[RMDB]
RNA sequence: GGGAACGACUCGAGUAGAGUCGAAAAAGAGUGGAGGGAAGAAAGGGGUCAAAACUGUUGGGACUGAGAGGGCCUCCUUGAGAAACUCUUAUUGUCAAGGCUCUCCGCUGCCCCUUAGCCCAGGGACAUUGUCUUCCAGCUCCCAGCACUCCUGUGCCUUCCCCACCAAAUUCGUUUGGUGGGGAAGAAAAGAAACAACAACAACAAC
Reactivity to 2A3 in 0.01 (KOAc 150mM, MgCl2 10mM, bicine 150mM(pH8.5), 24C), signal-to-noise 1, nucleotides 027 to 156: a000g070a010g050u080g020g100a020g000g060g030a070a000g010a060a100a000g040g000g000g000u050c030a080a050a000a000c120u090g070u140u040g010g000g060a120c060u020g020a030g030a080g170g000g010c030c030u030c000c020u040u040g010a010g010a060a100a020c100u140c030u150u040a100u160u300g070u000c030a000a000g000g010c060u030c020u010c050c010g030c030u050g000c050c000c000c000u090u060a030g030c030c020c020a010g050g000g000a050c060a070u200u100g060u110c000u200u150c010c000a020g050c110u000c000c000c000a000g000c010a000c040u110c060c030u130g050u100g080c020